[RMDB]
RNA sequence: GGGAACGACUCGAGUAGAGUCGAAAAGCGUACUACCCUAGACAUGCUCGGAAGCUAACAACAGCUCUCCCAAAUAGGAGAGACAUGUUAGAUAACGAGCAACAGCUAGGGUAUCGCAAAACAUAGUUAUAUGCGGUUCGCCGCAUAUAACUAUGAACCUUACAAAGAAGUUCGCUUCUUUGUAAGGAAAAGAAACAACAACAACAAC
Reactivity to DMS in 0.01 (KOAc 150mM, MgCl2 10mM, bicine 150mM(pH8.5), 24C), signal-to-noise 3, nucleotides 027 to 156: g010c010g030u010a090c070u000a030c000c010c000u010a010g010a090c070a300u000g080c010u000c000g010g010a230a220g020c010u000a000a010c010a060a140c090a210g000c000u000c000u000c000c000c010a020a150a270u000a070g010g010a030g000a010g010a040c080a220u000g010u010u000a030g000a070u010a160a300c020g010a020g010c000a010a060c120a120g000c010u000a020g020g010g010u000a000u000c000g000c000a050a060a110a220c000a000u000a020g000u000u000a000u000a000u000g010c000g030g030u000u000c300g000c010c010g000c000a000u000a010u000a000a010c000u000a000u000g030a050a070
Reactivity to 2A3 in 0.01 (KOAc 150mM, MgCl2 10mM, bicine 150mM(pH8.5), 24C), signal-to-noise 5, nucleotides 027 to 156: g010c020g030u060a090c040u000a010c010c000c000u020a010g030a080c060a090u040g000c000u000c000g010g010a260a110g010c010u010a000a000c020a030a020c030a060g020c010u000c000u050c010c020c040a200a300a120u300a160g000g010a010g000a000g060a040c020a080u040g000u000u000a000g000a010u020a060a020c000g000a000g000c000a000a000c010a000g010c000u000a000g010g020g010u030a000u080c000g000c000a030a070a000a000c010a000u010a000g000u000u000a000u000a000u000g000c000g010g050u040u050c210g020c040c000g010c000a000u000a000u000a000a000c000u000a010u000g000a000a000